[RMDB]
RNA sequence: GGGAACGACUCGAGUAGAGUCGAAAACUAUUUUGGCGGAUGUAAUUAAGCGUUUUAAAAUCCAAAACGGAUAUGAGGCUUUUUUGCUUGUUGGCAGUGAUGAACAUGGCAAUAAAAUAGAAAGUAAAUACCCUCCAUAGUUCGCUAUGGAGGGUAUAAAAGAAACAACAACAACAAC
Reactivity to DMS in 0.01 (KOAc 150mM, MgCl2 10mM, bicine 150mM(pH8.5), 24C), signal-to-noise 1, nucleotides 027 to 126: c010u000a040u000u020u000u000g020g030c160g010g010a080u000g020u000a040a040u000u020a060a050g040c020g000u000u000u000u000a030a120a150a040u000c030c000a110a070a140a100c210g000g000a020u000a080u010g010a080g020g010c000u000u000u000u010u000u000g020c060u000u000g040u000u000g030g010c040a050g000u000g000a160u030g000a090a010c070a070u010g020g010c000a020a190u000a060a020a020a060u010a060g000a080a090a100g010u000a050a060
Chemical mapping of a 177-nucleotide RNA with DMS. DMS adducts were read by reverse transcription with MarathonRT.